[RMDB]
An RNA of 207 nucleotides, treated with DMS and 2A3 and read out base by base. For DMS, 3,835 sequencing reads were counted. High DMS reactivity at an A or C suggests that its Watson-Crick edge is free. The RNA was probed in 150 mM KOAc, 10 mM MgCl2 and 150 mM bicine (pH 8.5) at 24 C. For 2A3 the reverse transcriptase was SuperScript II with manganese. It was measured as part of the RMDB library OK3TST.
RNA sequence: GGGAACGACUCGAGUAGAGUCGAAAAGGAGACGUGCCAGGUCCCGUGUGUAGGUUGCAAGACAGUGCUCCGGGCAUUAUCCUGCUCUGGGGCGGUGUGCGUCUUGUGAGCCCCUUCCGGAGUGACGAACAGGACGACUGGUGGUCAGUGGUGGGUCCUUUAUGCUCUGUUUCGACAGAGCAUAAAGAAAAGAAACAACAACAACAAC
Reactivity to DMS in 0.01 (KOAc 150mM, MgCl2 10mM, bicine 150mM(pH8.5), 24C), signal-to-noise 1, nucleotides 027 to 156: g000g010a150g020a110c080g030u010g020c030c030a150g030g050u010c010c010c040g040u010g030u000g020u010a050g020g030u000u020g030c040a040a080g030a050c010a120g000u000g030c070u000c020c060g000g010g030c020a080u010u020a190u020c160c200u010g000c000u000c010u000g030g000g000g020c020g010g000u000g060u030g040c060g000u000c030u000u000g010u000g020a090g000c010c020c000c000u000u000c070c060g000g020a090g040u010g030a100c040g020a100a110c030a070g020g010a040c090g000a130c030u010g050g040u020g050g000u010c030a080g030u010g000g020u020g000g010g000u010c060
Reactivity to 2A3 in 0.01 (KOAc 150mM, MgCl2 10mM, bicine 150mM(pH8.5), 24C), signal-to-noise 2, nucleotides 027 to 156: g070g010a060g020a050c070g010u080g020c010c020a020g000g010u020c090c040c030g060u100g030u020g040u050a070g030g030u020u080g010c000a000a020g010a030c040a090g050u030g060c000u000c000c020g000g000g000c010a030u070u100a060u270c030c050u010g030c010u020c090u160g000g000g000g000c050g000g030u210g000u090g040c000g000u000c000u010u000g010u020g040a010g000c000c010c000c010u070u030c040c040g080g090a100g020u130g060a030c010g010a030a050c020a020g030g010a010c000g040a110c010u020g000g020u020g000g020u080c040a010g010u050g020g090u110g000g020g030u040c020